[RMDB]
RNA sequence: GGGAACGACUCGAGUAGAGUCGAAAAUGUUGCUUCGGCAACACAGGGGGCGUACUACAUCUGGCUCUAGCCAACAGCCUCCCCACCGAUUCCCAAAUAGGAAUCGAGGGACAUGGCUAGAACCAGAUGUAUCGCAUAUAGCGUGCUUCGGCACGAAGAAGAGGUAUUUGUUCGCAAAUACCUCUUCAAAAGAAACAACAACAACAAC
Reactivity to 2A3 in 0.01 (KOAc 150mM, MgCl2 10mM, bicine 150mM(pH8.5), 24C), signal-to-noise 3, nucleotides 027 to 156: u070g010u020u000g000c020u090u060c290g130g000c000a010a000c010a020c060a060g000g000g020g010g020c010g040u040a040c030u010a000c010a000u000c000u000g000g000c010u000c000u000a000g020c000c010a070a040c060a210g050c020c050u030c000c000c000c000a110c030c000g020a000u000u000c020c010c060a150a280a170u300a070g000g000a000a000u010c000g000a060g000g000g000a000c030a060u030g000g000c000u000a010g000a010a010c000c000a000g000a000u000g000u040a000u000c010g000c010a010u110a030u050a190g040c000g000u000g000c000u050u050c190g100g000c010a000c030g010a070a030
Reactivity to DMS in 0.01 (KOAc 150mM, MgCl2 10mM, bicine 150mM(pH8.5), 24C), signal-to-noise 2, nucleotides 027 to 156: u010g020u010u010g030c000u000u000c300g050g090c000a030a020c030a010c050a090g020g000g030g000g070c040g010u020a040c090u000a040c010a000u000c020u010g010g010c050u000c010u010a010g000c010c010a020a120c090a190g020c100c050u000c020c010c000c010a160c270c000g020a010u000u010c010c010c010a070a200a250u010a030g000g020a030a000u010c000g020a130g000g010g000a050c030a300u000g000g000c000u000a040g000a010a010c010c000a010g000a010u000g000u000a000u000c020g000c070a120u000a130u000a110g000c010g000u000g000c000u000u000c230g040g000c000a030c000g000a030a130

Chemical mapping of a 207-nucleotide RNA with 2A3 and DMS. For DMS the reverse transcriptase was MarathonRT. Values cover nucleotides 27 to 156. Conditions: 150 mM KOAc, 10 mM MgCl2 and 150 mM bicine (pH 8.5), 24 C. The data come from the RNA Mapping Database (RMDB), library RNAMAK. For 2A3, 3,401 sequencing reads were counted.